[RMDB]
RNA sequence: GGGAACGACUCGAGUAGAGUCGAAAAGAUAUGGAAGUGAACUACACGCUAGUGAGCGAAGAACUCGGAAACGAGGGAGCUCACGAAGCGUGCACUUCCUAAGUCAAAACGCACGUUCGCGUGCGAAGUUUGCGUUAUGCUUCGGCAUAACGCAAACAAAAGAAACAACAACAACAAC
Reactivity to DMS in 0.01 (KOAc 150mM, MgCl2 10mM, bicine 150mM(pH8.5), 24C), signal-to-noise 1, nucleotides 027 to 126: g000a130u050a300u000g000g000a080a000g000u000g000a090a000c080u000a300c000a000c010g010c000u000a300g020u000g000a000g000c010g000a050a150g000a100a190c000u010c010g000g010a070a220a040c000g040a000g020g010g010a000g010c000u000c000a000c000g000a020a090g050c010g000u000g010c010a000c020u000u000c010c010u000a000a060g000u000c060a080a000a030a260c020g000c000a000c010g000u000u000c160g000c000g000u000g010c000g000a000a040
Reactivity to 2A3 in 0.01 (KOAc 150mM, MgCl2 10mM, bicine 150mM(pH8.5), 24C), signal-to-noise 1, nucleotides 027 to 126: g060a090u070a040u180g000g000a010a010g000u000g030a040a030c050u140a040c280a000c000g010c010u010a020g000u000g000a010g000c030g280a230a010g010a000a070c000u000c020g070g000a020a080a050c030g000a000g010g020g000a020g060c000u000c010a010c050g000a000a020g010c000g010u000g030c000a000c000u000u060c010c020u000a100a020g050u030c040a040a020a130a030c050g000c010a000c010g080u100u110c300g050c000g060u000g000c000g000a050a020